[RMDB]
RNA sequence: GGGAACGACUCGAGUAGAGUCGAAAACUGCACAGAGGGUGCGUCACAUGGGCCCCAGCGAGGCAGGCGGGAGCAAUGCUGCCACAGUUCACAGACGCGCUGCCGCAAGCUGCGCCUCUGACGGGUCUGAGAAGGGGAUGUUCGCAUCCCCUUCUCAAAAAGAAACAACAACAACAAC
Reactivity to DMS in 0.01 (KOAc 150mM, MgCl2 10mM, bicine 150mM(pH8.5), 24C), signal-to-noise 2, nucleotides 027 to 126: c110u000g000c020a050c050a150g000a080g000g020g040u010g010c010g010u030c120a100c120a100u000g020g000g040c000c000c030c100a050g000c240g000a100g010g010c030a120g020g010c000g000g000g000a050g040c010a030a240u020g000c000u000g000c050c090a110c160a110g010u000u020c110a120c030a060g010a090c030g000c290g000c000u000g000c000c010g030c070a090a090g000c050u000g000c110g010c000c060u000c040u000g000a130c210g010g020g010u010c040
Reactivity to 2A3 in 0.01 (KOAc 150mM, MgCl2 10mM, bicine 150mM(pH8.5), 24C), signal-to-noise 1, nucleotides 027 to 126: c020u020g050c020a010c000a000g300a150g140g300g020u040g040c010g110u040c030a030c040a180u190g000g030g000c030c000c000c010a020g040c000g040a040g020g000c020a020g000g050c000g090g000g010a060g020c020a010a180u210g000c000u010g030c040c070a090c020a030g080u190u130c070a000c000a050g010a020c030g040c010g000c060u100g120c000c010g010c030a050a040g030c040u140g030c070g050c000c000u000c000u010g010a020c090g020g000g000u000c060
Overview:
The record gives the reactivity of an RNA of 177 nucleotides to DMS and 2A3. The reactions ran in a buffer of 150 mM KOAc, 10 mM MgCl2 and 150 mM bicine (pH 8.5), at 24 C.